Overview: Structure probing data (2A3 and DMS) for a 177-nucleotide construct. For 2A3, 3,648 sequencing reads were counted. For DMS, 4,586 sequencing reads were counted.
[RMDB]
RNA sequence: GGGAACGACUCGAGUAGAGUCGAAAACUCUGGUUGCUUACGCGCUGAAGAUUACCGAUCUUGAUCCACUGGAAUUUGACCUACUGUUCGAACGUUUCUUAAACCCAGAACGUGUAUCAAUGCCUGACGCAAGAAAUUAUUUCGAUAAUUUCUUGCGAAAAGAAACAACAACAACAAC
Reactivity to 2A3 in 0.01 (KOAc 150mM, MgCl2 10mM, bicine 150mM(pH8.5), 24C), signal-to-noise 4, nucleotides 027 to 126: c040u020c040u030g090g000u070u170g020c020u100u110a050c060g000c010g000c080u060g040a030a020g020a080u040u110a110c020c060g040a040u020c010u020u070g040a040u020c020c010a040c060u030g020g060a110a110u060u020u060g020a030c000c020u020a040c020u070g070u100u040c020g020a050a020c020g020u010u030u020c030u000u110a110a090a050c030c000c010a010g020a050a030c060g040u040g020u040a050u160c060a110a050u120g070c000c020u030g030a020
Reactivity to DMS in 0.01 (KOAc 150mM, MgCl2 10mM, bicine 150mM(pH8.5), 24C), signal-to-noise 4, nucleotides 027 to 126: c040u000c050u000g020g020u000u000g010c050u000u010a090c130g020c090g020c090u000g000a070a040g010a070u000u000a090c140c100g010a080u000c040u010u000g000a090u000c030c040a060c060u000g000g010a070a100u000u000u000g000a020c050c030u000a050c040u010g000u000u000c030g010a050a110c070g010u000u010u000c020u000u000a060a080a160c040c020c040a090g000a070a050c070g020u000g010u010a050u000c060a040a080u000g000c050c020u000g010a260